Structure probing data (2A3 and DMS) for a 177-nucleotide construct. The 2A3 profile rests on 1,376 reads. Values cover nucleotides 27 to 126. Values are in units of 0.01, from 0 to 300, in steps of 10. The reactions ran in a buffer of 150 mM KOAc, 10 mM MgCl2 and 150 mM bicine (pH 8.5), at 24 C.
RNA sequence: GGGAACGACUCGAGUAGAGUCGAAAAGUUCGGCCCUUCCUAGCCAGUCCUACGUCAACGUCACAAGAGGUCACUGUGUUACCAACACCGCCUUCAGACGACUGUGGGAGAACGACGCCGCGCAGCAGGGUCGGGUAAAUUUCGAUUUACCCGACCCAAAAGAAACAACAACAACAAC
Reactivity to 2A3 in 0.01 (KOAc 150mM, MgCl2 10mM, bicine 150mM(pH8.5), 24C), signal-to-noise 1, nucleotides 027 to 126: g080u070u070c040g020g040c040c000c000u000u020c020c010u000a050g040c030c020a020g090u060c000c010u040a060c020g050u030c050a190a050c080g030u000c040a110c000a120a140g030a000g030g030u040c040a030c220u100g020u040g010u120u130a140c030c010a040a010c020a000c010c020g040c000c000u060u110c040a040g010a020c000g030a040c040u090g000u050g010g000g020a030g000a050a010c000g030a010c010g050c080c000g020c010g010c040a020g020c030a020
Reactivity to DMS in 0.01 (KOAc 150mM, MgCl2 10mM, bicine 150mM(pH8.5), 24C), signal-to-noise 2, nucleotides 027 to 126: g000u000u000c090g000g020c010c040c060u020u000c010c030u000a210g050c060c040a170g050u000c020c000u000a040c040g040u000c040a020a050c090g040u010c030a110c190a100a140g000a020g000g000u000c160a060c180u010g000u000g000u000u000a090c240c140a050a100c020a030c050c300g000c020c000u020u000c030a050g010a100c070g000a060c030u000g020u000g010g010g000a150g000a090a050c060g010a060c020g000c000c000g010c130g030c080a070g000c170a050